RNA sequence: GGGAACGACUCGAGUAGAGUCGAAAAGUUUACGUUCGCGUAAACAAAAAUCCUAAGUCACGUGAGGGCAUCGACAUGUCGACCGUCGGAAACGACGGCGACAACAGCGAUGCCUCCCCACCACGUGAUAUGGAAAAAAGGUCUGUUCGCAGACCAAGUGCUACAGUAGGUUCGCCUACUGUAGCACAAAAGAAACAACAACAACAAC
Reactivity to 2A3 in 0.01 (KOAc 150mM, MgCl2 10mM, bicine 150mM(pH8.5), 24C), signal-to-noise 2, nucleotides 027 to 156: g000u000u000u000a020c030g030u030u040c260g000c020g080u020a000a000a000c020a050a170a030a000a000u140c050c000u080a180a040g030u000c000a000c010g000u000g020a070g000g000g000c000a000u000c000g250a300c080a020u080g020u020c010g120a300c040c000g000u000c000g060g020a060a050a010c000g000a000c040g000g010c010g000a000c000a000a000c020a000g000c000g020a000u000g000c000c000u050c000c000c000c030a060c000c000a000c000g000u000g030a000u010a030u020g020g050a000a060a040a000a040a040g030g000u050c040u060g030u080u230c200g050c110a000g000a000c030c000a000a010